[RMDB]
An RNA of 177 nucleotides, treated with 2A3 and DMS and read out base by base. For 2A3, 975 sequencing reads were counted.

RNA sequence: GGGAACGACUCGAGUAGAGUCGAAAACUCGAAUCUUUCGAGAUUCGAGACUCUCGAAGUCUCAAUAAGAUCGAAAAGAUCGCCGAGCAUAAAAUAGACACAAUGCUGCUUGAUUCGUCAAGCAGAAGUUGCUUGUGAGUUUCGACUCACAAGCAACAAAAGAAACAACAACAACAAC
Reactivity to 2A3 in 0.01 (KOAc 150mM, MgCl2 10mM, bicine 150mM(pH8.5), 24C), signal-to-noise 1, nucleotides 027 to 126: c000u000c000g000a000a000u000c010u020u070u150c270g020a000g010a020u000u000c010g010a010g020a000c020u050c000u040c040g060a100a030g060u100c000u020c040a050a050u190a160a100g040a010u020c020g030a190a270a040a060g020a010u030c020g020c040c060g010a010g050c020a010u190a050a240a090a040u090a060g140a000c000a000c010a030a140u190g020c020u000g010c010u040u000g010a050u090u070c110g060u030c130a000a000g000c000a000g010a020a000
Reactivity to DMS in 0.01 (KOAc 150mM, MgCl2 10mM, bicine 150mM(pH8.5), 24C), signal-to-noise 1, nucleotides 027 to 126: c020u000c010g000a070a020u000c020u000u000u010c160g030a030g010a040u000u020c020g000a010g010a070c070u000c040u000c050g020a160a040g030u060c000u020c010a120a080u010a070a110g000a070u000c000g020a130a110a040a120g020a000u020c020g020c270c100g010a040g020c070a080u020a030a050a040a100u000a030g030a080c050a090c120a160a100u010g000c010u020g000c000u000u000g000a000u000u020c230g010u000c000a020a000g000c000a020g000a000a120

Values cover nucleotides 27 to 126.
For DMS, 638 sequencing reads were counted.
2A3 adducts were read by reverse transcription with SuperScript II with manganese.